Chemical mapping of a 177-nucleotide RNA with DMS and 2A3. 2A3 adducts were read by reverse transcription with SuperScript II with manganese. For DMS, 1,119 sequencing reads were counted.
RNA sequence: GGGAACGACUCGAGUAGAGUCGAAAAGAUAUGGACAGAACUACGCUAUUAUGAGCGAAGAACUCGGAAACGAGGGAGCUCAGAAUAGCGCUGUCCUAAGUCAAAGGUUUGGCUUCGGCCAAACCAACAGCAAGUUAGAGUUCGCUCUAACUUGCUGAAAAGAAACAACAACAACAAC
Reactivity to DMS in 0.01 (KOAc 150mM, MgCl2 10mM, bicine 150mM(pH8.5), 24C), signal-to-noise 2, nucleotides 027 to 126: g000a030u000a300u010g000g010a010c010a010g020a170a020c110u000a300c010g000c010u010a000u000u000a040u020g010a010g010c020g010a080a110g000a140a280c000u000c000g010g000a100a060a180c020g000a000g030g000g030a070g010c000u010c010a010g020a010a000u000a010g000c010g000c000u000g000u000c000c000u000a010a090g030u010c050a110a070a220g000g000u000u000u000g010g030c020u000u010c170g030g000c010c010a000a000a000c010c000a030a140
Reactivity to 2A3 in 0.01 (KOAc 150mM, MgCl2 10mM, bicine 150mM(pH8.5), 24C), signal-to-noise 2, nucleotides 027 to 126: g050a010u050a000u160g010g030a000c040a010g020a100a060c160u240a060c300g010c000u000a010u010u030a020u040g000a000g050c050g170a300a020g030a080a030c000u010c000g000g070a100a030a050c010g010a020g000g000g030a010g000c000u000c000a010g030a030a010u010a000g000c000g000c000u000g000u020c000c010u010a160a020g030u020c050a150a090a140g000g030u010u000u020g020g000c000u060u070c300g090g000c000c040a020a000a000c000c000a010a000
Annotation
The reactions ran in a buffer of 150 mM KOAc, 10 mM MgCl2 and 150 mM bicine (pH 8.5), at 24 C.